RNA sequence: GGGAACGACUCGAGUAGAGUCGAAAAUCUUCAACCUGCUCUGAAACGCCUCCAAUCUCUGGGAGGUUCUGUGACAUAAUGGUGAAAACCUCUGUCCAUGGCGUCAUCGGGUAUCCAGAGAUGAACCGACAACCCUCAUCAAUCGCACCGUACGCGACGGGCAUAGUCACUUCGGUGACUAUGCCCGAAAAGAAACAACAACAACAAC
Reactivity to 2A3 in 0.01 (KOAc 150mM, MgCl2 10mM, bicine 150mM(pH8.5), 24C), signal-to-noise 1, nucleotides 027 to 156: u010c010u100u100c010a090a100c040c040u040g010c000u030c000u030g050a100a130a120c040g000c040c000u000c020c010a070a060u040c000u000c020u080g000g000g040a010g000g010u000u060c020u000g000u010g000a000c000a060u230a010a110u170g010g010u080g090a210a100a050a050c000c040u100c030u020g050u000c030c010a050u040g130g060c050g100u040c000a040u110c040g150g000g000u140a110u160c020c010a000g010a000g010a030u110g120a080a020c050c020g020a040c020a050a010c020c040c030u050c010a110u050c060a000a090u010c030g000c030a010c020c160g090u170a050c150g010c000g000a000